An RNA of 177 nucleotides, treated with DMS and read out base by base. The RNA was probed in 150 mM KOAc, 10 mM MgCl2 and 150 mM bicine (pH 8.5) at 24 C. DMS adducts were read by reverse transcription with MarathonRT. Reactivities are given for positions 27 through 126. The DMS profile rests on 862 reads.
RNA sequence: GGGAACGACUCGAGUAGAGUCGAAAAAUUGAUGUGGGUUUUAACUUGUUGCCGUUCGGGACGUUGACGAAAUGGAGCGAUUUGACCCGUCUUGAAACACGGACCAAGGAGUCUAACAUGUGUGCAACAUUGAGAUCUCGUUCGCGAGAUCUCAAUGAAAAGAAACAACAACAACAAC
Reactivity to DMS in 0.01 (KOAc 150mM, MgCl2 10mM, bicine 150mM(pH8.5), 24C), signal-to-noise 1, nucleotides 027 to 126: a090u000u000g020a010u000g060u000g000g000g010u010u000u000u020a050a070c060u010u020g010u000u010g000c050c040g000u000u000c040g010g030g020a040c080g020u000u000g000a160c110g020a030a050a050u000g050g020a040g000c050g010a140u000u010u010g000a090c170c080c010g000u000c040u000u000g020a060a070a100c140a200c030g000g010a030c100c030a080a040g000g010a160g010u000c040u000a070a030c090a050u000g020u000g010u000g010c160a110a190